Conditions: 150 mM KOAc, 10 mM MgCl2 and 150 mM bicine (pH 8.5), 24 C. Chemical mapping of a 177-nucleotide RNA with 2A3 and DMS. Reactivities are given for positions 27 through 126. High 2A3 reactivity points to a flexible backbone, as in loops and unpaired stretches. 2A3 adducts were read by reverse transcription with SuperScript II with manganese. For 2A3, 82,577 sequencing reads were counted. Reactivities are rounded to 0.1 and cut off at 0 and 3.

[RMDB]
RNA sequence: GGGAACGACUCGAGUAGAGUCGAAAAUGACAGUGGAUAGGCGCGAAAGCGUCUAUCAAUUAGCAAUGACUGUAUGCUAAUUGACUAUUGUGAAAACAAUAGUUUGCUGUCUAACAGUCAUUGAUACGAUCAACUUUUAUUUCGAUAGGGGUUGAUCAAAAGAAACAACAACAACAAC
Reactivity to 2A3 in 0.01 (KOAc 150mM, MgCl2 10mM, bicine 150mM(pH8.5), 24C), signal-to-noise 9, nucleotides 027 to 126: u030g000a000c000a000g000u010g010g000a000u000a000g000g000c000g000c000g030a030a030a020g000c000g000u000c000u000a000u000c000a000a000u000u000a000g000c000a010a030u070g000a000c000u000g000u020a010u030g000c000u000a000a000u000u000g000a000c000u000a000u000u000g010u010g100a060a040a010a010c000a000a000u000a000g000u000u000u010g000c000u000g000u000c000u000a010a000c000a000g000u000c000a010u030u260g090a070u070a090c120
Reactivity to DMS in 0.01 (KOAc 150mM, MgCl2 10mM, bicine 150mM(pH8.5), 24C), signal-to-noise 8, nucleotides 027 to 126: u010g000a010c010a010g020u000g000g010a010u000a010g000g000c000g010c000g000a100a080a120g000c000g010u000c000u000a000u000c000a000a000u000u000a000g000c000a040a110u010g000a000c000u000g010u000a170u010g000c000u000a000a010u000u000g000a010c000u000a000u000u000g000u000g000a170a080a160a020c000a000a010u000a000g000u000u000u000g010c000u000g000u000c000u000a100a070c000a000g000u000c000a140u040u020g010a120u030a080c200